[RMDB]
RNA sequence: GGGAACGACUCGAGUAGAGUCGAAAAACGAAAAGACCCCGUGAACCUUUACUAUAGCUUCGCAUUGGUAUUGGAUAAUUAAUGUGUAGGAUAGGUCGGAGACAUUGAAGCAGGCACGCUAGUGUUUGUAUUGUACAUGGUUCGCCAUGUACAAUACAAAAGAAACAACAACAACAAC
Reactivity to DMS in 0.01 (KOAc 150mM, MgCl2 10mM, bicine 150mM(pH8.5), 24C), signal-to-noise 2, nucleotides 027 to 126: a090c100g010a080a090a120a100g010a150c050c010c020c080g000u000g030a080a060c030c010u000u000u000a090c030u020a040u000a140g010c030u000u000c110g000c030a090u000u000g010g010u010a030u010u010g010g020a100u010a050a040u000u000a020a040u000g030u010g020u010a030g000g000a050u010a010g010g000u000c060g020g010a100g020a050c100a050u000u000g020a060a020g020c020a040g000g000c030a040c050g000c100u000a060g010u000g010u000u000u000